An RNA of 207 nucleotides, treated with 2A3 and DMS and read out base by base. The reactions ran in a buffer of 150 mM KOAc, 10 mM MgCl2 and 150 mM bicine (pH 8.5), at 24 C.
RNA sequence: GGGAACGACUCGAGUAGAGUCGAAAAGGAUCUGAGUACUUAUAAGUGCGAAGUGAGUGAGGGUCUUACGAGCACAAAUUACAGCCCUCUAUUAAGUAUCGAAGAUCGGCCGGAGAUCGAGAUACAACUAUUACCCGGCGACUGUACGAAGAUCCGACAUACUACGCAUCUUCGGAUGCGUAGUAUGAAAAGAAACAACAACAACAAC
Reactivity to 2A3 in 0.01 (KOAc 150mM, MgCl2 10mM, bicine 150mM(pH8.5), 24C), signal-to-noise 4, nucleotides 027 to 156: g010g010a000u000c000u010g000a010g020u010a020c020u120u160a110u070a300a050g000u020g000c020g040a060a000g030u010g000a000g020u120g000a000g000g000g010u090c000u010u030a020c010g000a010g020c040a030c040a040a170a160u180u180a100c070a060g050c010c020c000u000c000u030a110u140u130a150a040g000u000a000u010c000g010a030a000g010a020u000c010g020g000c010c000g000g000a090g000a020u000c020g000a000g000a050u010a030c030a050a020c020u050a060u220u190a130c010c000c000g000g000c030g060a070c050u070g000u000a000c010g000a000a000g000a000u010c000c000g000a000
Reactivity to DMS in 0.01 (KOAc 150mM, MgCl2 10mM, bicine 150mM(pH8.5), 24C), signal-to-noise 2, nucleotides 027 to 156: g000g090a030u010c010u000g040a300g050u000a070c100u000u000a050u000a110a240g000u000g020c000g050a100a130g030u000g020a100g080u010g030a100g010g030g020u030c060u000u000a020c100g000a300g050c020a110c080a100a020a110u000u000a060c130a300g020c010c010c050u000c020u010a090u010u000a010a200g000u000a070u000c010g030a090a190g010a010u000c000g000g030c080c110g010g020a300g000a040u000c010g030a300g030a080u000a020c060a140a140c130u010a090u020u000a060c060c000c000g030g020c000g010a090c070u000g000u020a010c000g020a200a050g000a060u010c030c000g020a110